[RMDB]
RNA sequence: GGGAACGACUCGAGUAGAGUCGAAAAGAGAGCUGGGCCGCUCUCCUGAUGAGCCCAUGGCAGGGCGAAACCAGUUCGGUACGGUAUGGCGAGGCUUGCCUCGGAGCCAAGCGGGAGGGCUCCCGGGGCGCCGCACGGGCGCAGUGCUGCGCGAGACGAUUGGCAUCUACUUCGGUAGAUGCCAAUCAAAAGAAACAACAACAACAAC
Reactivity to 2A3 in 0.01 (KOAc 150mM, MgCl2 10mM, bicine 150mM(pH8.5), 24C), signal-to-noise 1, nucleotides 027 to 156: g070a000g000a000g000c010u070g000g030g030c110c030g010c000u010c020u060c000c020u050g060a110u090g030a010g090c030c010c010a060u100g020g000c060a010g080g000g000c030g010a140a060a080c020c000a010g020u070u050c030g010g010u100a080c120g000g030u040a090u140g120g030c040g040a070g110g000c040u040u130g000c010c000u000c030g040g000a010g000c000c000a080a070g130c080g010g060g010a010g000g000g010c000u020c060c030c000g000g000g010g010c010g000c000c000g010c000a040c020g060g150g000c080g010c060a010g030u030g150c010u010g000c000g010c020g000a040g010a040c080
The record gives the reactivity of an RNA of 207 nucleotides to 2A3. The 2A3 profile rests on 1,004 reads. 2A3 is a SHAPE reagent: it acylates the 2'-hydroxyl of flexible nucleotides of all four kinds. The RNA was probed in 150 mM KOAc, 10 mM MgCl2 and 150 mM bicine (pH 8.5) at 24 C.